Record summary
An RNA of 207 nucleotides, treated with DMS and 2A3 and read out base by base. 2A3 adducts were read by reverse transcription with SuperScript II with manganese. For 2A3, 1,235 sequencing reads were counted.
[RMDB]
RNA sequence: GGGAACGACUCGAGUAGAGUCGAAAAAGCAUGUUAGGUUCGCAUGGUGCACUAUUGUGUUAUUAGUAACUAAGUAAGCUUACAAUCGAAAAUGUUUAACCAUAAAAGGGUAAAAUGGUGUAAGACAGAUACCCUCUGAGCUUCGGCUCAGAGGGAAGUUAAGGUAUCCCUUCGGGGAUACCUUAACAAAAGAAACAACAACAACAAC
Reactivity to DMS in 0.01 (KOAc 150mM, MgCl2 10mM, bicine 150mM(pH8.5), 24C), signal-to-noise 1, nucleotides 027 to 156: a090g030c010a070u000g010u020u000a060g010g010u000u010c090g000c020a040u000g010g030u000g000c090a070c030u000a080u000u010g010u010g000u000u000a100u030u010a060g020u000a020a110c060u000a040a140g010u010a120a180g000c030u000u030a020c010a060a100u000c060g000a040a090a120a070u000g020u020u000u000a080a060c010c010a050u000a040a050a100a150g040g010g040u000a030a050a050a050u000g020g030u000g020u010a080a060g000a090c040a080g000a290u010a110c010c010c010u010c010u000g010a020g020c000u030u010c300g100g020c000u010c000a020g000a010g020g000g020a000a000
Reactivity to 2A3 in 0.01 (KOAc 150mM, MgCl2 10mM, bicine 150mM(pH8.5), 24C), signal-to-noise 2, nucleotides 027 to 156: a000g100c020a050u090g000u000u060a060g030g040u020u040c020g000c020a000u050g060g050u070g050c020a000c020u080a160u200u100g050u000g020u090u000a040u010u000a040g030u020a030a030c040u000a070a110g030u010a050a020g080c000u010u030a020c080a030a060u060c030g100a100a000a010a030u060g010u050u090u040a020a000c000c010a010u070a100a110a040a060g100g000g030u120a030a040a030a020u030g020g020u020g010u090a020a000g000a030c030a000g120a020u120a060c000c000c000u000c000u010g000a000g000c010u060u100c210g110g000c000u000c000a000g000a000g000g010g000a000a000